[RMDB]
RNA sequence: GGGAACGACUCGAGUAGAGUCGAAAAGAUAUGGAAGCGUUGUAGGGAGAAGAAUGGAUCGGAAACGAUCCAUACCUUCGACGAUCUACACGACGCUUCCUAAGUCAAAAGAGUGGUUCGCCACUCAGGUUCUUAGAGAGUUCGCUCUCUAAGAACCAAAAGAAACAACAACAACAAC
Reactivity to 2A3 in 0.01 (KOAc 150mM, MgCl2 10mM, bicine 150mM(pH8.5), 24C), signal-to-noise 2, nucleotides 027 to 126: g020a010u050a030u140g000g000a000a000g020c010g020u080u040g000u050a010g020g010g040a040g030a000a000g020a020a030u030g010g010a010u000c010g000g030a030a070a030c010g000a010u000c010c010a000u060a070c040c020u000u030c020g230a300c020g000a050u000c000u020a020c070a010c160g190a010c010g020c000u030u000c010c010u010a010a010g030u000c050a040a090a130a060g000a000g000u020g060g050u130u140c300g090c110c000a000c000u000c000a000
Reactivity to DMS in 0.01 (KOAc 150mM, MgCl2 10mM, bicine 150mM(pH8.5), 24C), signal-to-noise 3, nucleotides 027 to 126: g020a040u010a300u010g000g010a030a030g040c000g030u000u000g000u000a030g000g000g000a060g020a040a010g030a180a020u000g000g000a010u000c000g000g000a110a080a100c000g010a010u000c000c000a000u000a030c200c000u000u000c000g000a070c260g010a030u000c010u000a020c050a090c300g020a040c030g010c000u000u000c000c000u010a030a090g000u010c030a090a070a150a140g000a030g010u010g000g000u000u010c270g010c020c010a010c010u000c000a050

Annotation
Chemical mapping of a 177-nucleotide RNA with 2A3 and DMS. For 2A3 the reverse transcriptase was SuperScript II with manganese. Values cover nucleotides 27 to 126. The DMS profile rests on 2,087 reads. High 2A3 reactivity points to a flexible backbone, as in loops and unpaired stretches. For 2A3, 4,993 sequencing reads were counted.